Annotation
Chemical mapping of a 177-nucleotide RNA with DMS and 2A3. The 2A3 profile rests on 1,917 reads. For 2A3 the reverse transcriptase was SuperScript II with manganese.
[RMDB]
RNA sequence: GGGAACGACUCGAGUAGAGUCGAAAAAGAUGGCAGCGUUGAAUAACUUGGACAACCUGACCUUCGUUGUUAACUGCAACUUGCAGCGUCUCGACGGCCCUGUUCGCGGUAACACCAAGAUCAUUCAGCUCUAAUAAACCUUCGGGUUUAUUAGAGCAAAAGAAACAACAACAACAAC
Reactivity to DMS in 0.01 (KOAc 150mM, MgCl2 10mM, bicine 150mM(pH8.5), 24C), signal-to-noise 3, nucleotides 027 to 126: a090g010a070u000g010g000c010a010g010c210g010u010u000g020a080a110u010a030a110c130u000u020g000g010a300c020a030a030c030c020u020g000a120c050c010u000u010c030g010u000u000g000u010u010a100a080c020u000g000c060a050a060c180u010u000g020c030a040g010c080g000u000c050u000c100g020a090c070g030g000c020c010c020u010g000u000u000c100g050c140g000g000u010a070a090c100a220c010c020a040a130g000a070u000c050a140u000u000c150a100
Reactivity to 2A3 in 0.01 (KOAc 150mM, MgCl2 10mM, bicine 150mM(pH8.5), 24C), signal-to-noise 3, nucleotides 027 to 126: a010g060a010u060g020g000c000a040g010c060g100u050u050g100a300a120u110a140a080c070u090u140g140g050a020c010a010a020c000c020u060g250a300c020c000u020u020c010g000u010u060g030u000u050a030a040c030u020g040c010a060a140c090u060u140g000c030a030g010c010g060u000c030u030c060g040a040c030g040g040c000c020c000u020g040u040u040c050g000c000g050g040u030a060a020c040a000c100c010a030a010g010a090u090c050a040u210u170c050a040